About this RNA: The record gives the reactivity of an RNA of 177 nucleotides to 2A3.
RNA sequence: GGGAACGACUCGAGUAGAGUCGAAAAGAAAAGCUAUUCACAUAUUUUCACAACACUAUUACCAUCUAGUGAAACAAACUACCUAUUAGAUGAAUGGGUUUUAGAGGAACCCCAUUUAAAAUAUAAACCCAGUCAUAUGGUUCGCCAUAUGACUGGGAAAAGAAACAACAACAACAAC
Reactivity to 2A3 in 0.01 (KOAc 150mM, MgCl2 10mM, bicine 150mM(pH8.5), 24C), signal-to-noise 4, nucleotides 027 to 126: g060a010a100a000a010g050c100u130a100u100u180c090a070c020a100u140a070u030u060u020u120c020a050c030a090a140c040a050c110u040a090u160u260a140c000c030a050u130c050u040a030g050u050g110a120a100a000c060a020a080a000c030u080a090c000c030u050a080u210u090a110g070a190u060g030a090a060u070g010g010g020u010u010u030u070a140g010a040g090g060a020a030c000c000c020c040a030u010u000u070a000a130a040a000u200a030u060a030a070a070